[RMDB]
RNA sequence: GGGAACGACUCGAGUAGAGUCGAAAAUCAAGACCAGCCUGGUCAACAUGGUGAAACCUCAUCUCUACUAAAUAUACAAAAAUUAGCUGGGUGUGGUGGCACAUGCCUAUAGUCCCAGCUACUUGAGAGGCUGCAGCAGGAGAAAUCGCUUGAACCACACCUGGUAAUGAUUCGUCAUUACCAGGUGAAAAGAAACAACAACAACAAC
Reactivity to 2A3 in 0.01 (KOAc 150mM, MgCl2 10mM, bicine 150mM(pH8.5), 24C), signal-to-noise 2, nucleotides 027 to 156: u060c010a030a030g050a050c020c000a010g090c000c020u090g000g020u030c040a020a040c020a090u160g020g000u040g050a070a010a000c000c000u010c030a130u020c030u020c010u040a070c010u100a110a090a140u150a090u030a100c030a040a160a060a060a060u090u030a010g000c000u010g050g040g010u040g010u020g060g110u060g050g030c040a070c060a170u300g020c010c010u100a080u080a080g070u020c010c000c010a000g000c000u000a030c020u020u020g010a010g000a010g030g010c030u040g000c020a010g010c020a020g000g020a040g010a020a110a020u060c060g010c020u050u080g020a050a020c010c090a010

This 207-nucleotide RNA was probed chemically with 2A3. The RNA was probed in 150 mM KOAc, 10 mM MgCl2 and 150 mM bicine (pH 8.5) at 24 C. Reactivities are given for positions 27 through 156. For 2A3 the reverse transcriptase was SuperScript II with manganese.